The data come from the RNA Mapping Database (RMDB), library OK3TST. An RNA of 207 nucleotides, treated with 2A3 and DMS and read out base by base.
[RMDB]
RNA sequence: GGGAACGACUCGAGUAGAGUCGAAAACUAUCAUUUUUGGACAUUUGGGUUGGUUCCAAGUCUUUGCUAUUGUGAAUAAUGCCGCAAUAAACAUACGUGUGCAUGUGUCUUUAAAGCAGCAUGAUUUAUAGUCCUUUGGCUAUAUACCCAGUAAUGACUCCAUACUCAGUUUCGACUGAGUAUGGAGAAAAGAAACAACAACAACAAC
Reactivity to 2A3 in 0.01 (KOAc 150mM, MgCl2 10mM, bicine 150mM(pH8.5), 24C), signal-to-noise 4, nucleotides 027 to 156: c060u080a080u220c040a130u080u080u040u060u070g060g000a030c020a090u050u040u080g050g000g010u020u060g060g000u080u000c000c010a030a000g050u020c090u070u140u070g000c020u040a060u160u120g040u020g120a090a100u100a140a030u080g060c030c010g010c050a020a080u110a100a140a020c040a040u150a080c120g050u050g070u080g070c000a020u050g040u030g040u070c040u000u070u060a100a100a010g010c020a010g000c000a010u020g060a080u040u100u040a030u040a010g020u020c040c050u080u060u210g000g030c000u000a000u000a010u020a080c020c020c000a040g030u110a020a160u090g070a050
Reactivity to DMS in 0.01 (KOAc 150mM, MgCl2 10mM, bicine 150mM(pH8.5), 24C), signal-to-noise 2, nucleotides 027 to 156: c040u000a110u020c070a280u000u000u000u000u010g000g020a050c030a070u010u000u000g010g020g030u000u010g020g050u000u000c010c020a080a300g010u000c050u000u000u000g040c020u000a080u010u000g020u020g000a110a130u000a080a060u010g010c030c030g020c030a090a230u000a010a050a060c020a050u000a030c050g010u010g020u000g040c090a060u000g010u000g010u000c050u000u000u010a050a090a300g010c000a020g020c020a030u010g000a090u000u010u000a020u000a040g010u010c040c230u000u000u010g030g000c020u000a050u010a040u000a070c030c010c030a220g000u000a070a100u000g000a290